An RNA of 177 nucleotides, treated with DMS and 2A3 and read out base by base.
[RMDB]
RNA sequence: GGGAACGACUCGAGUAGAGUCGAAAAGCAACCCCGCAUAUCCAUGCAGCUUGACAACCAGUGUCGCCCAUGAUGACACUCCCGAAAGCGGGACGUGACACUCUCCCUCACCAAAACAAGGUGUACGCUCAGAGUGUAAGUUCGCUUACACUCUGAGAAAAGAAACAACAACAACAAC
Reactivity to DMS in 0.01 (KOAc 150mM, MgCl2 10mM, bicine 150mM(pH8.5), 24C), signal-to-noise 3, nucleotides 027 to 126: g010c150a090a120c060c040c030c110g020c080a040u010a130u000c040c060a030u010g000c030a040g020c080u000u000g000a080c090a090a120c120c050a030g010u010g020u020c060g010c010c020c030a070u010g000a050u000g000a110c080a030c020u000c010c020c010g030a060a090a090g000c060g010g000g010a060c160g000u010g000a070c040a080c040u010c040u010c000c040c040u000c030a050c050c020a060a090a020a140c180a070a040g000g010u000g010u000a080c180g000
Reactivity to 2A3 in 0.01 (KOAc 150mM, MgCl2 10mM, bicine 150mM(pH8.5), 24C), signal-to-noise 2, nucleotides 027 to 126: g020c020a010a120c020c000c030c020g030c010a100u120a020u060c060c030a020u080g040c020a000g000c000u050u120g050a040c020a060a070c050c040a030g030u010g030u030c020g040c000c030c000a070u140g010a030u050g020a020c000a020c030u060c020c000c010g160a300a220a010g300c080g000g000g000a000c090g000u010g030a000c000a020c040u030c010u030c010c000c000u020c010a010c010c010a050a080a080a120c060a100a070g020g000u020g020u070a040c050g020
It was measured as part of the RMDB library VIROID. The reactions ran in a buffer of 150 mM KOAc, 10 mM MgCl2 and 150 mM bicine (pH 8.5), at 24 C.